[RMDB]
RNA sequence: GGGAACGACUCGAGUAGAGUCGAAAAGAUAUGGAGGGGAGUACGUUGAUCACACGGGAUCGGAAACGAUCUUGUGGGAGUAUCCUCCUAAGUCAAACGUACAUUCUGGUUCGCCAGAAUGUACGAAGUUGGCGUAAUGGUUCGCCAUUACGCCAACAAAAGAAACAACAACAACAAC
Reactivity to 2A3 in 0.01 (KOAc 150mM, MgCl2 10mM, bicine 150mM(pH8.5), 24C), signal-to-noise 1, nucleotides 027 to 126: g000a030u100a000u070g000g020a040g030g010g020g010a120g030u000a010c050g090u120u300g290a250u130c060a010c020a000c180g000g000g000a000u030c000g000g000a060a050a000c010g000a000u010c000u010u020g020u000g020g020g010a050g000u030a060u300c000c000u000c040c000u030a090a000g040u040c050a110a020a110c040g000u000a000c000a030u000u010c010u000g080g030u090u090c230g080c090c000a000g000a000a000u020g000u010a000c020g000a020a050
Reactivity to DMS in 0.01 (KOAc 150mM, MgCl2 10mM, bicine 150mM(pH8.5), 24C), signal-to-noise 2, nucleotides 027 to 126: g000a030u000a300u000g010g000a010g000g010g000g000a300g030u000a030c030g000u010u050g030a290u010c020a110c000a020c060g010g040g010a030u000c000g020g000a150a030a140c010g020a000u000c010u000u000g020u020g000g000g000a060g010u000a010u000c000c000u010c000c000u000a050a040g010u000c000a080a110a210c060g030u000a000c000a010u000u000c000u000g030g010u000u000c240g050c000c000a010g000a020a000u000g000u000a000c000g000a020a090
The record gives the reactivity of an RNA of 177 nucleotides to 2A3 and DMS.
Reactivities are rounded to 0.1 and cut off at 0 and 3.
Reactivities are given for positions 27 through 126.
For 2A3 the reverse transcriptase was SuperScript II with manganese.